[RMDB]
RNA sequence: GGGAACGACUCGAGUAGAGUCGAAAACAUGGUUGAAACUGUUGUGGGUCAACUUGAGCAAACUAAUAUGCAUAGUCCUGAUGUUAUAGUAGGUGACUAUGUCAUUAUUAGUGAAAAAUUGUUUGUGGGGGGCCAAACUUCGGUUUGGCCAAAAGAAACAACAACAACAAC
Reactivity to DMS in 0.01 (KOAc 150mM, MgCl2 10mM, bicine 150mM(pH8.5), 24C), signal-to-noise 2, nucleotides 027 to 129: c080a130u050g000g000u060u080g050a120a070a140c000u000g130u000u080g000u000g030g000g000u070c000a000a040c100u050u000g000a070g070c160a120a140a000c000u000a020a020u020a010u000g030c050a050u000a000g000u040c060c060u000g000a300u010g030u040u120a040u040a000g000u050a140g000g000u120g000a000c090u020a000u000g000u150c000a000u060u080a000u000u000a050g000u020g000a000a000a000a000a000u000u000g000u000u000u130g100u030g000g000g000g000
Reactivity to 2A3 in 0.01 (KOAc 150mM, MgCl2 10mM, bicine 150mM(pH8.5), 24C), signal-to-noise 1, nucleotides 027 to 129: c000a060u000g000g060u070u200g050a010a020a020c000u000g000u260u000g060u110g090g100g030u030c000a050a030c030u000u110g000a000g000c060a020a020a020c000u000a000a000u000a010u000g000c000a000u000a000g000u010c000c050u240g070a300u140g050u010u000a240u220a300g090u020a000g000g000u040g010a050c000u000a000u010g000u010c080a000u050u120a000u000u000a010g000u000g000a000a000a000a000a000u090u040g000u000u000u180g000u000g010g000g000g000